Source: RMDB library POS240, as collected in RNAgym. The record gives the reactivity of an RNA of 307 nucleotides to DMS. The reactions ran in a buffer of 150 mM KOAc, 10 mM MgCl2 and 150 mM bicine (pH 8.5), at 24 C.

[RMDB]
RNA sequence: GGGAACGACUCGAGUAGAGUCGAAAAGAAGUAUGCUUAGAACUAUGUCGAAAGAUGGAGUACGAAGUUGACGAAAAAGUCAACGAAGUACGACAUCGAAAGACAUAGUUCUAAGCAUACGAAAUAAUGCAGUCAAGUCAAAUUCAGUGCCCGUUUCUGUCAUAGCGGGGGCUGGCCCAGAUGGCUGCCACAGCAAGCUCCACAGCUCAUGGGCCCUGGGUCACCUACCCUGGGACCUGGGGAUAAGUUUGGCUGUGGACAGUGAAAGAGACUAGUUCGCUAGUCUCAAAAGAAACAACAACAACAAC
Reactivity to DMS in 0.01 (KOAc 150mM, MgCl2 10mM, bicine 150mM(pH8.5), 24C), signal-to-noise 4, nucleotides 027 to 266: g010a170a180g010u000a000u000g000c000u000u000a000g000a010a010c000u000a020u010g000u000c000g010a220a120a180g000a000u000g010g000a220g000u010a020c000g010a140a290g010u010u000g000a010c030g040a090a140a140a160a240g000u000c010a000a000c000g000a080a300g000u000a000c000g000a130c000a020u000c000g000a080a120a180g010a010c010a000u000a020g010u000u000c000u000a010a000g000c000a000u000a000c000g010a040a090a060u030a070a070u010g010c000a020g000u000c020a050a120g010u010c080a030a040a040u020u000c000a020g040u000g000c000c000c000g010u000u000u010c180u030g020u020c200a070u040a040g000c000g000g000g010g000g000c010u000g000g010c010c000c010a090g020a060u000g010g000c000u000g010c010c140a020c110a110g010c090a090a110g010c190u000c020c030a010c010a030g000c010u010c260a060u010g000g000g000c000c000c010u000g000g000g000u000c020a080c010c030u000a120c260c240c110u000g000g030g000a010c000c010u000g010g000g000g010a020u000a040a080g000u010u010u020g000g010c020u000g030u010g000g000a000c030a020g000u020g000a100a120a160